[RMDB]
RNA sequence: GGGAACGACUCGAGUAGAGUCGAAAAGGACGUGGACCAGCGAGGGUGAUUUGCUGCGUUGACGUGGUGCUCUGCUUGGCUGUGUGUCGGUGUGGCUUGCCCCCCUGCAGAGGGUGGCGCGGGUCCGCCGUUGAAGCGAGGGAACCGGGUCAGGCCGCUAUGAACUUCACUUCGGUGAAGUUCAUAGAAAAGAAACAACAACAACAAC
Reactivity to 2A3 in 0.01 (KOAc 150mM, MgCl2 10mM, bicine 150mM(pH8.5), 24C), signal-to-noise 1, nucleotides 027 to 156: g100g060a010c040g010u020g000g010a030c070c010a030g000c050g100a040g070g050g040u160g080a160u130u050u150g000c050u030g020c040g020u000u060g020a020c080g060u020g000g060u050g000c010u000c030u080g070c020u040u140g090g000c030u080g020u060g030u060g090u200c000g000g040u040g030u160g030g030c000u010u020g000c000c000c000c000c000c000u020g000c050a030g040a050g270g010g000u240g000g000c120g030c010g020g000g040u090c000c030g010c010c020g000u010u140g030a020a000g010c010g000a040g040g000g000a020a010c020c000g040g020g000u020c040a010g010g030c000c000g010